Structure probing data (DMS and 2A3) for a 170-nucleotide construct.

RNA sequence: GGGAACGACUCGAGUAGAGUCGAAAAUUCAGACUGGAAGUGCAAGGUGACAGAUGUACUUUUCCCCGGCCAAAAAUACAGUAGCGAUUGUAAUGUCGUACGGUAUUCUUUGGACGGUAAUUUCAGAGCAGCGCGUUGUUCGCAACGCGCAAAAGAAACAACAACAACAAC
Reactivity to DMS in 0.01 (KOAc 150mM, MgCl2 10mM, bicine 150mM(pH8.5), 24C), signal-to-noise 2, nucleotides 027 to 129: u060u010c050a030g010a100c150u080g060g000a000a000g000u000g020c030a020a030g040g010u010g030a030c010a020g060a090u020g080u050a080c110u000u000u000u000c020c050c030c010g010g030c020c000a000a000a000a000a000u020a000c000a080g040u000a100g060c030g040a000u000u080g050u030a160a140u050g030u000c020g010u000a030c020g050g020u000a010u000u000c110u060u020u020g000g000a040c030g020g070u040a030a020u000u000u000c050a040g010a140g040c100a080
Reactivity to 2A3 in 0.01 (KOAc 150mM, MgCl2 10mM, bicine 150mM(pH8.5), 24C), signal-to-noise 3, nucleotides 027 to 129: u070u030c010a030g040a070c090u100g040g190a110a020g000u030g050c000a010a010g000g030u000g010a000c000a000g040a020u030g010u090a020c000u050u010u000u010c000c010c000c000g000g000c000c000a000a000a000a000a000u010a000c020a010g000u000a010g280c010g070a020u020u120g180u270a120a220u300g000u010c000g000u000a000c000g000g020u000a000u020u070c110u050u000u000g000g000a000c000g000g020u030a070a130u010u050u120c050a020g090a050g070c100a000
The DMS profile rests on 7,029 reads. The RNA was probed in 150 mM KOAc, 10 mM MgCl2 and 150 mM bicine (pH 8.5) at 24 C.